[RMDB]
RNA sequence: GGGAACGACUCGAGUAGAGUCGAAAAGAUAUGGAUCGUGUGCCGGCCAACAGCUCGGAAACGAGACAUGGCUUGCACCGAUCCUAAGUCAAAGACCGAUGGAAGGCUUCGGCCUUCCAUCGGUCAAGUGUACAUUGAUGUUCGCAUCAAUGUACACAAAAGAAACAACAACAACAAC
Reactivity to 2A3 in 0.01 (KOAc 150mM, MgCl2 10mM, bicine 150mM(pH8.5), 24C), signal-to-noise 2, nucleotides 027 to 126: g040a000u090a000u190g000g000a000u010c010g020u030g010u000g300c000c040g000g030c030c000a110a060c150a180g040c000u020c010g030g040a110a090a040c020g000a000g030a010c030a110u150g000g000c000u000u000g000c000a010c020c000g000a000u000c000c000u000a010a010g030u000c020a110a100a090g010a010c000c030g020a020u000g040g020a020a000g000g000c010u160u220c300g090g000c060c040u000u000c030c000a000u000c010g000g000u000c000a010a000
Reactivity to DMS in 0.01 (KOAc 150mM, MgCl2 10mM, bicine 150mM(pH8.5), 24C), signal-to-noise 3, nucleotides 027 to 126: g000a030u010a300u000g010g010a000u000c010g020u000g030u000g010c020c080g000g020c000c010a030a090c300a200g010c010u000c000g000g000a090a090a230c010g010a020g000a040c100a220u000g000g010c000u000u010g000c020a020c010c010g010a010u000c020c000u000a000a050g000u010c020a100a140a140g000a020c000c000g010a020u010g000g000a030a000g000g000c020u010u010c150g040g010c000c000u000u010c000c000a000u010c000g010g000u000c010a010a030